[RMDB]
RNA sequence: GGGAACGACUCGAGUAGAGUCGAAAACGAAGGACUUUCGAGUCCUUCGACUAACCGAGAAAGAUCCUCGGUAUAAAUCUGGAACCCUUGGAAACAAGGGAAUGAACGGAAUCUUCGGAUUCCGUAACUCACAUAACGACUUCGGUCGUUAUGUGAGAAAAGAAACAACAACAACAAC
Reactivity to 2A3 in 0.01 (KOAc 150mM, MgCl2 10mM, bicine 150mM(pH8.5), 24C), signal-to-noise 1, nucleotides 027 to 126: c000g000a010a010g020g000a000c000u070u080u160c270g020a040g000u000c000c000u000u000c000g000a000c000u020a030a010c000c010g010a000g000a050a280a010g070a050u040c000c000u000c010g000g000u000a040u050a030a020a050u020c090u110g130g040a090a100c000c000c000u000u000g000g030a020a090a020c000a010a010g000g010g010a010a030u050g020a020a000c010g000g000a010a010u000c000u040u090c190g040g000a000u010u000c000c000g000u010a020a010
Reactivity to DMS in 0.01 (KOAc 150mM, MgCl2 10mM, bicine 150mM(pH8.5), 24C), signal-to-noise 2, nucleotides 027 to 126: c070g010a030a010g000g000a010c000u000u000u020c140g040a020g030u000c000c010u020u000c000g010a140c110u020a060a090c000c010g000a020g000a130a110a100g000a100u000c020c010u000c020g000g000u000a050u000a090a050a100u010c040u000g000g010a090a110c000c000c000u000u000g010g000a140a140a120c000a000a000g000g000g010a060a040u010g010a160a020c000g000g010a020a010u000c000u000u020c250g010g000a000u000u000c000c000g010u000a020a020